This 177-nucleotide RNA was probed chemically with 2A3 and DMS. The RNA was probed in 150 mM KOAc, 10 mM MgCl2 and 150 mM bicine (pH 8.5) at 24 C. For 2A3 the reverse transcriptase was SuperScript II with manganese. For DMS, 4,793 sequencing reads were counted. It was measured as part of the RMDB library OK2TST.
[RMDB]
RNA sequence: GGGAACGACUCGAGUAGAGUCGAAAACGUCACGGCAAGCGUCGGGCACGCCACCUCGCUCCACCACAGCGUGCUGCUCACCGACGCCGUCGGGGUCCGCGUGGGCAGCAACGCCACCGUCUCCGUACCAUAGGAUGCGAUUCGUCGCAUCCUAUGGAAAAGAAACAACAACAACAAC
Reactivity to 2A3 in 0.01 (KOAc 150mM, MgCl2 10mM, bicine 150mM(pH8.5), 24C), signal-to-noise 3, nucleotides 027 to 126: c020g060u030c040a020c090g010g010c050a070a150g050c080g110u020c050g050g020g000c050a010c050g020c000c000a040c010c010u020c030g010c030u040c020c020a050c010c010a040c030a050g000c000g030u010g010c000u000g000c000u010c000a020c000c020g020a050c070g120c030c010g150u150c110g050g020g030g010u060c080c030g070c060g010u010g000g020g010c000a000g000c010a060a020c010g000c000c000a040c020c030g050u000c030u030c020c010g070u070a070
Reactivity to DMS in 0.01 (KOAc 150mM, MgCl2 10mM, bicine 150mM(pH8.5), 24C), signal-to-noise 3, nucleotides 027 to 126: c090g010u000c040a080c040g010g000c060a070a100g020c070g010u000c080g030g010g000c070a040c070g000c060c050a070c060c020u000c050g020c030u000c030c020a070c060c070a100c140a090g000c010g010u010g000c000u000g000c000u010c010a030c000c000g010a040c030g000c010c000g020u010c180g040g030g020g010u010c030c100g020c180g000u010g000g010g000c000a000g010c000a020a020c010g010c010c110a080c090c060g010u000c030u000c010c040g020u000a230